[RMDB]
Source information:
An RNA of 177 nucleotides, treated with DMS and 2A3 and read out base by base. DMS adducts were read by reverse transcription with MarathonRT. For 2A3 the reverse transcriptase was SuperScript II with manganese. The reactions ran in a buffer of 150 mM KOAc, 10 mM MgCl2 and 150 mM bicine (pH 8.5), at 24 C. It was measured as part of the RMDB library RFMREP.
RNA sequence: GGGAACGACUCGAGUAGAGUCGAAAACUCCUAUAGUCGUUCGGACCGCCUUCUAUGCUCGCGUCUUUCGAGGGGUACGUCGCCACUGGCCGCUGAAAAGUGGUGUGGCACUGCUCCGGCGAGGACGGGCUAUGAUGAAGUUCGCUUCAUCAUAGCCAAAAGAAACAACAACAACAAC
Reactivity to DMS in 0.01 (KOAc 150mM, MgCl2 10mM, bicine 150mM(pH8.5), 24C), signal-to-noise 2, nucleotides 027 to 126: c110u000c000c040u000a120u000a060g000u010c020g010u000u010c030g000g010a170c050c070g030c090c010u010u010c050u000a080u010g040c040u000c040g010c050g020u000c000u000u000u010c000g040a300g010g000g000g030u000a000c190g010u000c150g030c020c000a000c000u020g040g020c000c000g040c010u000g010a070a040a140a020g080u000g000g010u000g030u000g000g010c000a020c000u010g000c000u010c010c000g010g010c020g000a020g000g000a040c010g020
Reactivity to 2A3 in 0.01 (KOAc 150mM, MgCl2 10mM, bicine 150mM(pH8.5), 24C), signal-to-noise 1, nucleotides 027 to 126: c030u000c010c000u070a080u120a150g030u020c030g000u020u070c010g050g120a040c010c040g030c020c000u060u100c050u090a060u140g060c070u070c070g070c000g010u020c010u100u230u030c010g020a040g000g020g000g010u010a010c130g010u040c090g020c010c000a020c000u010g260g010c020c010g000c020u020g010a030a040a000a000g020u010g000g010u070g020u000g000g020c000a000c010u030g010c020u010c000c000g000g020c000g000a000g020g000a010c000g010